[RMDB]
RNA sequence: GGGAACGACUCGAGUAGAGUCGAAAAUGUGCCGUAUCGGUGCCCAGUUUGGUGGGAUCUAUCUCAUCCACAUUCUGAGCCAUCACUGGGAAGAGGAUCAUGAUAGACGUGACUAUAAUACCUGCUAUCCCUCUAUACAGUUCGCUGUAUAGAGGGAAAAAGAAACAACAACAACAAC
Reactivity to 2A3 in 0.01 (KOAc 150mM, MgCl2 10mM, bicine 150mM(pH8.5), 24C), signal-to-noise 5, nucleotides 027 to 126: u120g030u070g000c000c010g050u110a120u210c060g050g030u050g020c020c000c000a010g020u050u100u120g050g010u020g000g030g010a050u050c030u090a080u010c030u030c050a060u040c040c010a090c010a080u140u050c030u080g060a030g070c030c040a070u040c040a010c070u070g020g010g010a020a020g040a040g020g010a020u040c020a050u170g040a030u030a030g060a020c070g050u060g060a010c060u040a040u050a300a080u060a110c010c010u010g030c000u060a090
Reactivity to DMS in 0.01 (KOAc 150mM, MgCl2 10mM, bicine 150mM(pH8.5), 24C), signal-to-noise 8, nucleotides 027 to 126: u000g010u010g020c010c010g030u000a080u010c070g020g030u000g000c020c020c020a050g010u000u010u010g020g020u000g010g000g000a170u000c100u010a070u000c040u000c280a070u010c020c040a070c130a170u000u000c040u010g000a110g010c040c040a080u000c130a100c040u000g010g010g010a090a060g010a130g000g000a050u000c150a040u000g010a080u000a040g000a060c090g010u010g010a080c060u000a070u010a050a090u000a110c020c020u000g010c100u000a200